[RMDB]
RNA sequence: GGGAACGACUCGAGUAGAGUCGAAAAGUUAGCAUUCCUUUCGAGGAAUGCUAACGCGGCGUUGAUAGUUUAAGUAAAAUAGAUUCUUUCUAGGUAUAAGUUAGGGUUGGUCCCUUUGAUGCACCACAAGCACGAGAUACCUUCGGGUAUCUCGUGCGCGCAUAUUUACUUUCGAGUAAAUAUGCGCAAAAGAAACAACAACAACAAC
Reactivity to DMS in 0.01 (KOAc 150mM, MgCl2 10mM, bicine 150mM(pH8.5), 24C), signal-to-noise 1, nucleotides 027 to 156: g040u000u000a010g020c000a010u010u000c000c020u000u010u020c270g000a040g030g030a010a010u000g000c020u000a000a000c000g020c040g000g000c080g030u000u000g000a130u000a080g030u010u000u000a040a150g000u010a090a080a040a190u000a080g010a090u000u000c050u000u010u000c030u000a050g020g000u010a090u000a070a110g010u000u000a090g010g020g020u000u000g040g000u000c030c000c010u000u000u000g000a090u000g000c040a070c070c050a090c080a080a190g030c020a000c000g000a070g030a020u000a020c020c010u010u000c300g020g000g040u010a010u000c010u000c000g020u000g010c000
Reactivity to 2A3 in 0.01 (KOAc 150mM, MgCl2 10mM, bicine 150mM(pH8.5), 24C), signal-to-noise 2, nucleotides 027 to 156: g000u010u010a000g030c000a000u000u000c000c000u070u010u050c210g080a040g000g020a000a000u000g000c000u010a000a000c000g000c010g060g000c080g040u020u150g050a100u090a130g030u110u160u110a140a020g040u070a040a080a070a100u110a030g070a090u100u050c040u080u080u060c050u110a030g000g140u110a110u100a240a170g060u100u060a010g030g020g000u020u030g050g030u130c030c000c000u020u070u110g080a050u060g020c050a030c030c060a030c040a180a030g070c080a000c000g000a000g010a020u010a010c010c000u020u130c280g060g000g000u000a010u010c000u020c000g010u000g010c000

Record summary: Chemical mapping of a 207-nucleotide RNA with DMS and 2A3. In probing experiments dimethyl sulfate is read out at A N1 and C N3, which are open when not base-paired. It was measured as part of the RMDB library ARCHII. Values cover nucleotides 27 to 156.